Background
This 177-nucleotide RNA was probed chemically with 2A3 and DMS. Reactivities are given for positions 27 through 126. For DMS the reverse transcriptase was MarathonRT. The RNA was probed in 150 mM KOAc, 10 mM MgCl2 and 150 mM bicine (pH 8.5) at 24 C. The DMS profile rests on 1,008 reads. 2A3 adducts were read by reverse transcription with SuperScript II with manganese.
RNA sequence: GGGAACGACUCGAGUAGAGUCGAAAACGGUCGACCAUCAUUCCGGACUUCAUCGGCCAUACCUUUGCGGUGCACGACGGCCGCAAGCACGUCCCCGUGUUCGUCACCGAAUCGAUGGUGGGCCACACCACGUUGCUACAUUCGUGUAGCAACGUGGAAAAGAAACAACAACAACAAC
Reactivity to 2A3 in 0.01 (KOAc 150mM, MgCl2 10mM, bicine 150mM(pH8.5), 24C), signal-to-noise 2, nucleotides 027 to 126: c050g010g000u010c030g170a020c000c020a010u000c010a000u020u000c010c030g010g000a010c010u060u050c060a090u160c030g020g060c030c000a050u170a090c030c000u050u010u150g000c050g020g000u070g100c100a050c220g300a040c100g130g010c000c000g000c000a000a010g000c020a010c090g110u120c050c020c000c010g010u030g000u020u030c100g050u050c050a080c230c030g010a020a020u050c150g020a010u000g020g000u070g000g000g040c000c000a010c010a010
Reactivity to DMS in 0.01 (KOAc 150mM, MgCl2 10mM, bicine 150mM(pH8.5), 24C), signal-to-noise 2, nucleotides 027 to 126: c130g010g020u010c010g000a030c000c030a030u040c030a090u000u000c040c240g000g030a050c080u000u000c090a030u000c110g000g010c080c040a040u010a070c190c050u000u000u000g020c050g010g020u000g050c190a070c060g000a060c100g000g030c020c000g010c030a020a020g010c100a070c070g000u000c140c100c030c050g040u000g000u000u000c220g000u010c040a130c040c070g000a050a020u000c120g020a040u000g000g000u020g000g000g000c030c000a060c130a190